[RMDB]
Chemical mapping of a 177-nucleotide RNA with DMS.

RNA sequence: GGGAACGACUCGAGUAGAGUCGAAAAUGGGCAGGACCCGGGGCCGACCAGGCUUCUCAGAGCUGUCCUCAGCUGCUAAUCCCCUCCAGUGGGUCAGGGAGUCCUGAGCAGCACAGGACCUGGAGGAACCCUAAGGGCUAUUCGUAGCCCUUAGGGUAAAAGAAACAACAACAACAAC
Reactivity to DMS in 0.01 (KOAc 150mM, MgCl2 10mM, bicine 150mM(pH8.5), 24C), signal-to-noise 2, nucleotides 027 to 126: u030g000g000g010c010a070g020g000a130c050c030c020g030g000g010g010c050c020g040a130c130c260a180g000g020c050u000u000c010u000c080a080g050a210g000c080u000g010u000c040c070u010c120a100g010c030u000g010c040u000a130a150u000c040c030c010c040u000c060c070a050g030u020g010g000g010u020c070a130g030g010g000a180g000u000c060c010u000g000a140g000c100a030g010c020a200c100a040g010g000a030c010c020u000g060g010a130g010g000a100
The data come from the RNA Mapping Database (RMDB), library OK2TST. The RNA was probed in 150 mM KOAc, 10 mM MgCl2 and 150 mM bicine (pH 8.5) at 24 C.